Structure probing data (2A3 and DMS) for a 177-nucleotide construct. The DMS profile rests on 1,171 reads. Conditions: 150 mM KOAc, 10 mM MgCl2 and 150 mM bicine (pH 8.5), 24 C. As a SHAPE reagent, 2A3 marks flexible, mostly unpaired nucleotides at the ribose 2'-OH. For 2A3, 3,802 sequencing reads were counted.
RNA sequence: GGGAACGACUCGAGUAGAGUCGAAAAGAGACGUUGUUCGCAACGUCUCGCAAUAUGCGGCGGUCGCGCGCCGCACUGAGAUCGUCGGGAUCCAGACCGACAACACCCAAGAAUUCGUUCUUGGGAACCAUCUGGUAUCGUUCGCGAUACCAGAUGGAAAAGAAACAACAACAACAAC
Reactivity to 2A3 in 0.01 (KOAc 150mM, MgCl2 10mM, bicine 150mM(pH8.5), 24C), signal-to-noise 3, nucleotides 027 to 126: g000a000g010a010c000g010u000u020g020u050u110c250g030c080a000a010c000g000u000c000u000c010g000c000a050a070u150a080u150g010c020g010g000c020g030g030u120c040g000c010g000c000g000c150c000g060c000a000c020u140g070a100g070a180u120c090g010u020c010g040g040g010a020u020c000c030a030g040a060c010c010g010a000c010a030a040c050a070c000c000c000a020a000g000a010a010u120u100c180g060u080u000c020u000u000g000g000g010a000a000
Reactivity to DMS in 0.01 (KOAc 150mM, MgCl2 10mM, bicine 150mM(pH8.5), 24C), signal-to-noise 2, nucleotides 027 to 126: g020a020g000a010c000g020u000u000g000u000u000c210g000c000a000a000c000g000u000c000u000c000g000c220a060a060u010a120u000g020c000g000g020c000g000g040u000c270g000c300g020c000g000c000c010g000c010a000c020u020g000a190g030a060u020c100g000u000c040g000g000g000a060u000c010c020a090g000a110c000c000g000a020c020a080a130c300a250c000c000c000a000a030g000a000a040u000u000c210g000u000u000c000u000u010g000g000g000a020a070